[RMDB]
RNA sequence: GGGAACGACUCGAGUAGAGUCGAAAAUGCGAUGGCAUCUACAUCGUGGAUGUGCAGAUCUGGCAGGACUCCGGUGAUGCGCGCACGUGGGAGACGCGCCGCCGAAGGCUCCUGUCUGCAGAGGGUAAGUGCCCCAAUCAUUCGUGAUUGGGGCACUAAAAGAAACAACAACAACAAC
Reactivity to 2A3 in 0.01 (KOAc 150mM, MgCl2 10mM, bicine 150mM(pH8.5), 24C), signal-to-noise 1, nucleotides 027 to 126: u120g030c040g060a040u040g020g060c020a120u070c010u070a030c020a300u060c190g040u030g030g000a040u060g020u050g050c010a020g010a130u040c060u150g050g070c020a010g060g030a030c000u030c000c000g030g010u000g020a130u160g000c020g020c010g000c070a040c070g170u220g090g200g020a190g010a050c000g000c000g000c030c010g000c000c020g000a010a050g060g000c030u050c000c000u000g020u000c020u020g000c010a030g060a110g100g000g150u130a120

This 177-nucleotide RNA was probed chemically with 2A3.
Values cover nucleotides 27 to 126.
The data come from the RNA Mapping Database (RMDB), library OK2TRN.